RNA sequence: GGGAACGACUCGAGUAGAGUCGAAAAGAUAUGGAGUUCCAUCACAGAUGAAGCUCGGAAACGAGGGUCUGCUGAUGGAGACUCCUAAGUCAAAAGUACUUACAUCCGUUCGCGGAUGUAAGUACAAGAUCUGGAGUACGUUCGCGUACUCCAGAUCAAAAGAAACAACAACAACAAC
Reactivity to DMS in 0.01 (KOAc 150mM, MgCl2 10mM, bicine 150mM(pH8.5), 24C), signal-to-noise 2, nucleotides 027 to 126: g010a030u000a300u000g000g010a010g000u000u000c000c010a000u000c000a030c030a010g000a040u000g000a210a120g020c010u000c010g020g000a080a090a210c000g020a000g000g030g000u000c020u000g010c210u000g040a020u000g000g010a010g000a000c000u020c010c000u000a010a090g000u010c040a130a130a110a070g000u000a000c000u000u000a000c000a030u000c010c000g000u000u010c230g010c000g010g000a000u000g000u000a000a010g020u000a000c000a060a070
Reactivity to 2A3 in 0.01 (KOAc 150mM, MgCl2 10mM, bicine 150mM(pH8.5), 24C), signal-to-noise 1, nucleotides 027 to 126: g030a020u110a090u120g020g000a000g020u020u000c010c000a010u000c000a000c000a020g010a030u050g300a250a120g100c000u030c010g020g020a050a070a080c020g000a000g060g050g000u000c000u030g000c090u000g010a010u000g020g000a010g040a000c000u000c000c000u000a070a010g100u020c030a010a000a020a220g020u000a000c010u000u020a010c010a000u000c000c020g090u050u110c300g010c020g210g000a000u020g000u000a000a000g000u010a000c000a000a030
Structure probing data (DMS and 2A3) for a 177-nucleotide construct. The reactions ran in a buffer of 150 mM KOAc, 10 mM MgCl2 and 150 mM bicine (pH 8.5), at 24 C. For 2A3, 2,501 sequencing reads were counted. Source: RMDB library TTRDEL, as collected in RNAgym.